[RMDB]
RNA sequence: GGGAACGACUCGAGUAGAGUCGAAAAUGGUAAAUGUCUCGCCUGUGCUAUAUUUUGUUUUUCGGUUAGUUAAAUAUCGUACGUUCAUAUUUGAACGUUCUGCCGGAAUGCAUUAUCAAUAGAGGUAUAUUCUUUAAAAUUUCGAUUUUAAAGAAUAAAAAGAAACAACAACAACAAC
Reactivity to 2A3 in 0.01 (KOAc 150mM, MgCl2 10mM, bicine 150mM(pH8.5), 24C), signal-to-noise 7, nucleotides 027 to 126: u140g040g020u080a080a090a040u070g030u020c020u010c030g010c000c010u070g030u070g090c020u040a040u020a040u190u040u010u020g020u000u010u000u020u020c020g030g000u030u200a040g020u090u150a080a120a040u260a150u140c130g030u050a020c000g000u000u010c020a030u080a170u300u230u150g000a000a000c000g000u020u010c010u010g000c000c010g010g000a000a000u010g000c000a020u020u030a020u090c040a020a080u030a060g030a020g050g000u020a070
Reactivity to DMS in 0.01 (KOAc 150mM, MgCl2 10mM, bicine 150mM(pH8.5), 24C), signal-to-noise 3, nucleotides 027 to 126: u010g000g010u010a050a110a070u010g000u010c020u000c020g010c020c010u010g020u010g020c020u000a050u010a060u000u000u000u010g020u000u010u000u000u000c030g000g010u020u050a060g030u020u020a060a070a120u020a060u030c180g010u010a010c010g020u010u000c000a030u030a140u010u020u010g010a010a010c000g000u000u000c020u000g010c000c000g010g000a020a020u010g000c000a010u000u000a010u020c100a030a050u010a040g000a100g000g010u000a150